[RMDB]
Chemical mapping of a 177-nucleotide RNA with 2A3 and DMS.
The RNA was probed in 150 mM KOAc, 10 mM MgCl2 and 150 mM bicine (pH 8.5) at 24 C.
Reactivities are rounded to 0.1 and cut off at 0 and 3.
For DMS the reverse transcriptase was MarathonRT.
RNA sequence: GGGAACGACUCGAGUAGAGUCGAAAAUAUAAAGACUGGUUGUGCAAGACCUACCACACAACAGGAGGAAAGUGACCAAACCAACAAGGCCACACGUUGCAAAAUUGUACAGACCUUUCAGCACUGCCCAGAUAUAGUGAUUCGUCACUAUAUCUGGAAAAGAAACAACAACAACAAC
Reactivity to 2A3 in 0.01 (KOAc 150mM, MgCl2 10mM, bicine 150mM(pH8.5), 24C), signal-to-noise 6, nucleotides 027 to 126: u170a010u030a020a110a000g050a030c040u040g030g040u030u020g020u030g020c020a030a030g010a040c000c010u050a200c040c020a040c010a010c020a120a080c020a050g030g030a010g020g030a110a060a030g020u030g010a030c010c000a080a050a040c040c000a030a070c040a120a090g030g000c010c000a020c010a010c070g070u060u060g000c020a010a040a120a180u060u050g010u020a020c010a030g080a120c010c000u020u060u050c030a020g050c040a030c070u110g020c010
Reactivity to DMS in 0.01 (KOAc 150mM, MgCl2 10mM, bicine 150mM(pH8.5), 24C), signal-to-noise 6, nucleotides 027 to 126: u000a110u000a090a100a120g010a090c050u010g010g010u000u010g010u000g010c050a080a070g010a140c050c030u000a090c060c050a110c080a070c090a050a060c090a080g010g010a110g000g020a070a090a080g020u000g010a040c020c030a030a080a110c070c070a050a070c110a070a050g010g010c000c010a040c060a080c130g000u000u010g010c090a040a040a070a070u000u010g010u000a040c070a050g010a090c030c020u000u010u000c060a100g010c110a070c080u010g010c270